[RMDB]
RNA sequence: GGGAACGACUCGAGUAGAGUCGAAAAGAAAGAAAGAAAGCGGUUGGGUGGGUCCAUCGACCGUCGGGGCGUAUUCGGACGCUUUACCACGACGCGAGGAAAUAGCGAGACCGACCACCCCCUUUAACAGAGGUAUAGUAGUUCGCUACUAUACCAACUCAACAGUAAACUUCGGUUUACUGUUGAGAAAAGAAACAACAACAACAAC
Reactivity to 2A3 in 0.01 (KOAc 150mM, MgCl2 10mM, bicine 150mM(pH8.5), 24C), signal-to-noise 3, nucleotides 027 to 156: g060a020a060a010g040a040a080a030g060a070a080a000g050c110g050g030u170u080g070g030g060u050g010g030g020u040c040c000a090u040c020g020a070c050c030g010u020c020g010g000g020g000c040g000u050a090u150u160c080g070g060a010c010g010c000u060u020u130a120c050c030a080c060g030a020c030g030c040g010a060g000g080a040a160a060u070a020g000c030g020a030g030a070c000c020g030a030c000c020a020c020c010c000c000c000u000u160u050a100a040c080a040g090a040g110g000u000a000u000a000g000u000a010g000u030u090c240g010c140u000a000c000u010a000u010a000c000c000a000a000
Reactivity to DMS in 0.01 (KOAc 150mM, MgCl2 10mM, bicine 150mM(pH8.5), 24C), signal-to-noise 2, nucleotides 027 to 156: g000a260a090a190g030a140a050a190g000a100a150a100g010c120g050g030u010u000g010g040g010u010g010g000g020u000c040c030a160u000c050g000a060c160c020g000u000c030g000g010g020g030c030g010u000a110u010u000c140g000g010a060c020g080c040u000u010u010a130c040c020a080c010g010a050c030g020c030g000a090g000g000a060a080a080u000a110g020c060g000a150g010a090c010c060g000a070c020c000a060c000c000c010c010c030u000u020u000a060a200c070a200g000a160g050g040u000a010u000a010g000u000a020g000u000u010c300g040c000u000a010c000u010a010u000a000c000c000a020a050
Description: Structure probing data (2A3 and DMS) for a 207-nucleotide construct. The data come from the RNA Mapping Database (RMDB), library M2RFPK. In probing experiments dimethyl sulfate is read out at A N1 and C N3, which are open when not base-paired. 2A3 adducts were read by reverse transcription with SuperScript II with manganese. Conditions: 150 mM KOAc, 10 mM MgCl2 and 150 mM bicine (pH 8.5), 24 C. Reactivities are given for positions 27 through 156. For DMS, 2,421 sequencing reads were counted.